[RMDB]
RNA sequence: GGGAACGACUCGAGUAGAGUCGAAAAGUUAUGCUCUCGGUGCCUAAUGGCGGUGCGGGAAACCCACUCUAAAGUCCUUAGGGUUAGCCCCUUAAGGCGGGGUUCGGAGGCACCUGGCAACAGAAGCUGAAACUGUGCACAUUCGUGUGCACAGUAAGAGUAGGAAAUAGUUCGCUAUUUCCUACUCAAAAGAAACAACAACAACAAC
Reactivity to 2A3 in 0.01 (KOAc 150mM, MgCl2 10mM, bicine 150mM(pH8.5), 24C), signal-to-noise 5, nucleotides 027 to 156: g060u110u080a080u210g030c010u030c020u050c090g070g000u030g000c010c010u180a270a160u140g100g050c080g010g020u040g020c040g000g020g010a040a050a030c020c000c010a070c040u140c070u110a150a100a120g210u100c000c010u000u010a000g000g000g020u030u050a040g020c030c000c000c000u010u050a000a010g000g010c000g000g000g000g000u010u120c060g080g030a040g080g020c000a000c000c000u000g080g000c000a010a000c020a030g070a060a010g000c030u090g030a160a030a010c000u000g010u000g010c000a000c000a020u020u100c180g070u060g000u010g000c000a000c010a000g000u000a010a010
Reactivity to DMS in 0.01 (KOAc 150mM, MgCl2 10mM, bicine 150mM(pH8.5), 24C), signal-to-noise 2, nucleotides 027 to 156: g010u000u000a080u010g030c040u010c020u000c070g020g030u000g010c010c000u000a120a090u000g020g010c100g020g030u000g010c020g020g000g010a100a060a080c000c000c040a100c130u010c100u020a100a110a160g020u010c040c030u000u000a040g020g020g010u000u010a200g010c130c250c020c020u010u000a020a030g020g090c000g030g020g010g020u000u010c080g010g000a180g040g020c020a030c000c000u010g000g020c020a060a110c030a020g000a070a050g020c000u020g000a140a100a070c010u010g010u010g020c020a020c000a120u010u000c280g030u020g030u000g010c010a010c000a000g010u000a010a070

Structure probing data (2A3 and DMS) for a 207-nucleotide construct. For 2A3 the reverse transcriptase was SuperScript II with manganese. The RNA was probed in 150 mM KOAc, 10 mM MgCl2 and 150 mM bicine (pH 8.5) at 24 C. For DMS, 5,197 sequencing reads were counted. In probing experiments dimethyl sulfate is read out at A N1 and C N3, which are open when not base-paired. It was measured as part of the RMDB library M2RFPK. For 2A3, 4,702 sequencing reads were counted.